Chemical mapping of a 177-nucleotide RNA with DMS.
RNA sequence: GGGAACGACUCGAGUAGAGUCGAAAAGAUAUGGACAUUGACUAGGGAGAACCCGGUCGGAAACGACCGAUGUUCUUUGAUCUAGGAUGUCCUAAGUCAAAAGGAACGAAGGUUCGCCUUCGUUCCACCGCAAUUAUUUCUUCGGAAAUAAUUGCGGAAAAGAAACAACAACAACAAC
Reactivity to DMS in 0.01 (KOAc 150mM, MgCl2 10mM, bicine 150mM(pH8.5), 24C), signal-to-noise 1, nucleotides 027 to 126: g020a000u000a060u000g000g000a060c000a020u000u000g000a300c010u000a010g010g000g000a000g020a020a000c000c300c000g000g020u000c000g000g010a000a020a050c000g030a000c000c000g000a000u000g000u000u000c000u000u000u030g000a080u000c000u000a000g030g000a020u000g010u000c000c000u010a010a090g000u000c010a070a120a060a130g000g010a000a000c000g010a030a030g000g010u000u000c300g010c010c000u010u000c000g010u000u000c000c000a040
DMS adducts were read by reverse transcription with MarathonRT. For DMS, 1,278 sequencing reads were counted.